[RMDB]
RNA sequence: GGGAACGACUCGAGUAGAGUCGAAAAUAACUUGCUGAUCCAAAUCUUACAGCUGACUUUCCAAUAAUAUCUGACAGUCCAAAGAAUCCGACUUUACCAAAAUCUCCGUUACCAGUAAAAUCAUAUUCUUUAGGUAACACAAAAGCGAAUGAAGCUCGAAUAGGACAUGUUUCGACAUGUCCUAUUCAAAAGAAACAACAACAACAAC
Reactivity to 2A3 in 0.01 (KOAc 150mM, MgCl2 10mM, bicine 150mM(pH8.5), 24C), signal-to-noise 4, nucleotides 027 to 156: u060a020a040c040u040u090g030c010u020g020a070u040c020c040a090a080a070u080c060u080u120a040c040a020g020c020u030g030a050c020u050u070u020c020c010a020a040u190a140a050u050a090u120c020u050g020a040c030a010g030u010c020c010a070a040a090g030a020a040u050c060c030g030a020c030u050u040u060a080c040c000a080a050a110a120u030c070u020c040c090g010u000u010a020c010c010a020g040u100a020a070a050a120u130c040a030u050a100u190u050c020u020u060u010a040g000g000u010a010a010c010a000c020a040a100a060a020g040c010g070a010a050u120g050a080a020g000c040u060c060
Reactivity to DMS in 0.01 (KOAc 150mM, MgCl2 10mM, bicine 150mM(pH8.5), 24C), signal-to-noise 2, nucleotides 027 to 156: u000a050a120c100u000u020g030c010u010g030a120u000c020c050a030a080a160u000c050u000u010a070c020a110g000c000u000g000a120c060u010u000u010c010c020a080a120u000a020a190u010a070u000c050u000g030a120c060a120g010u000c050c040a050a070a300g000a060a070u010c090c030g000a020c020u010u000u040a050c010c010a040a110a130a130u000c070u020c050c130g040u010u010a060c040c030a090g030u020a050a070a060a070u010c120a100u000a210u000u000c040u000u010u000a120g030g000u000a030a110c030a100c070a070a040a060a130g000c010g000a040a060u000g010a130a170g030c050u020c060